[RMDB]
RNA sequence: GGGAACGACUCGAGUAGAGUCGAAAAUUUGUGAGGGGGAAGCGUGUCAGGGUAUGCGGAUACAUUAACUUGAAGGUUAGAUCAUAGUGGUGUGGUCCGCCUUUUGUUUGUGGUAAAACCUUGCGAGCUAUAUUAAUUAUUUCGAUAAUUAAUAUAGAAAAGAAACAACAACAACAAC
Reactivity to 2A3 in 0.01 (KOAc 150mM, MgCl2 10mM, bicine 150mM(pH8.5), 24C), signal-to-noise 4, nucleotides 027 to 126: u140u130u140g040u030g010a090g010g010g000g010g030a020a000g050c020g020u070g050u070c050a000g040g000g010u040a030u070g000c010g010g010a010u030a060c000a020u030u070a100a040c010u020u070g030a050a020g100g000u110u140a030g030a070u050c010a020u050a090g120u070g090g050u050g010u000g050g010u020c000c010g000c000c000u100u110u030u040g050u020u030u090g020u020g020g030u040a050a080a010a060c010c000u000u070g030c070g060a040g020
Reactivity to DMS in 0.01 (KOAc 150mM, MgCl2 10mM, bicine 150mM(pH8.5), 24C), signal-to-noise 4, nucleotides 027 to 126: u020u020u030g010u010g000a080g010g010g010g010g010a080a070g010c110g010u010g010u030c050a040g000g000g020u010a040u020g010c030g000g000a030u010a020c020a010u010u010a030a040c020u000u010g010a040a090g000g020u020u030a090g010a060u010c090a040u030a070g010u010g000g000u000g010u000g020g020u000c020c050g000c000c110u000u000u010u010g000u010u020u010g010u000g000g010u010a040a050a070a070c020c020u000u000g010c060g010a110g000
About this RNA:
This 177-nucleotide RNA was probed chemically with 2A3 and DMS. Values cover nucleotides 27 to 126. The RNA was probed in 150 mM KOAc, 10 mM MgCl2 and 150 mM bicine (pH 8.5) at 24 C. The 2A3 profile rests on 2,228 reads. 2A3 adducts were read by reverse transcription with SuperScript II with manganese. Source: RMDB library OK1LIB, as collected in RNAgym.